[RMDB]
RNA sequence: GGGAACGACUCGAGUAGAGUCGAAAAUGGGCAUGGACAGAUACCUAGCUCAACUGUCUAAGAUAAGUGUGGGUGUGGAGACCAGCCUAAUCUCAGGUGCUGAGACAUAGUGCUCAAAACCCCUCUACUGCAUACAGGGCUCUCCCAACAUGGAAGAGUAGCUAAUAGUUUUCGAACUAUUAGCUACAAAAGAAACAACAACAACAAC
Reactivity to DMS in 0.01 (KOAc 150mM, MgCl2 10mM, bicine 150mM(pH8.5), 24C), signal-to-noise 4, nucleotides 027 to 156: u010g010g010g050c030a120u000g000g020a060c020a080g000a130u000a040c030c020u010a210g030c030u000c020a050a090c010u010g010u010c030u010a070a120g010a120u000a050a080g020u000g010u000g020g000g000u010g020u000g030g000a180g010a070c070c030a110g000c010c000u000a040a070u000c020u000c020a220g010g010u010g020c090u020g000a020g000a050c040a140u000a080g050u000g000c020u010c020a030a060a120a090c030c010c020c010u000c010u000a050c030u010g000c050a250u010a080c110a070g000g020g000c030u000c020u000c010c030c010a090a120c110a080u010g000g010a090a100g010a220
Reactivity to 2A3 in 0.01 (KOAc 150mM, MgCl2 10mM, bicine 150mM(pH8.5), 24C), signal-to-noise 9, nucleotides 027 to 156: u070g010g010g000c060a050u050g020g020a040c030a060g050a040u130a110c020c040u050a050g010c010u030c060a030a070c020u030g020u030c030u090a100a070g020a180u100a140a080g060u040g000u070g050g010g010u140g010u060g060g020a030g010a030c040c040a010g000c010c000u040a070a080u020c030u000c020a030g160g080u160g110c080u020g010a000g000a020c020a050u130a030g070u130g150c010u010c020a020a060a060a100c000c000c020c000u000c020u030a030c020u040g030c020a050u070a140c040a060g020g010g010c010u000c010u000c020c000c010a030a050c050a060u160g030g050a060a030g050a050